[RMDB]
RNA sequence: GGGAACGACUCGAGUAGAGUCGAAAAACUAUGGAUGCAGUUCAACGACUAGACGGUGAUGGGCUAGCGUAAUGAAUGCGUUCUGCACACUCUUACGCCGGCUUAAGAUAUAGUCUACUCCCACUCUGAAAGGAGGGGUACUAAAAGCUCUUAAGGUAGAUGGUAUACUGUUCGCAGUAUACCAUCUAAAAGAAACAACAACAACAAC
Reactivity to 2A3 in 0.01 (KOAc 150mM, MgCl2 10mM, bicine 150mM(pH8.5), 24C), signal-to-noise 5, nucleotides 027 to 156: a000c080u080a090u110g050g000a030u070g010c040a030g040u040u090c060a100a020c050g090a050c030u030a040g040a050c050g050g070u130g030a090u160g030g060g000c010u010a010g000c010g000u020a010a050u050g010a110a270u010g010c010g060u220u090c100u200g000c000a010c000a010c010u010c010u020u030a010c020g020c010c000g020g000c000u010u010a020a010g030a010u070a010u040a110g000u000c020u050a030c030u060c000c000c030a150c020u030c020u050g110a100a030a020g020g010a010g000g020g000g000u010a010c030u050a000a120a050a040g030c010u020c020u090u080a060a040g100g010u030
Reactivity to DMS in 0.01 (KOAc 150mM, MgCl2 10mM, bicine 150mM(pH8.5), 24C), signal-to-noise 1, nucleotides 027 to 156: a120c090u000a100u010g010g020a050u000g010c020a090g020u010u010c050a050a150c020g020a130c040u010a100g000a060c030g020g020u000g010a170u000g030g000g020c090u010a040g000c020g000u000a010a050u010g000a010a020u000g050c040g010u000u000c160u010g060c080a050c020a020c020u000c000u000u000a020c000g050c010c000g070g010c000u000u000a030a050g020a210u000a080u000a110g030u000c000u000a080c100u000c000c030c000a080c030u010c000u010g030a150a160a130g030g000a040g030g000g010g020u000a050c050u000a010a080a080a120g020c060u000c030u000u000a070a070g020g010u000
Chemical mapping of a 207-nucleotide RNA with 2A3 and DMS. It was measured as part of the RMDB library ARCHII. DMS (dimethyl sulfate) methylates the pairing face of unpaired adenines and cytosines. For 2A3, 3,831 sequencing reads were counted. The reactions ran in a buffer of 150 mM KOAc, 10 mM MgCl2 and 150 mM bicine (pH 8.5), at 24 C.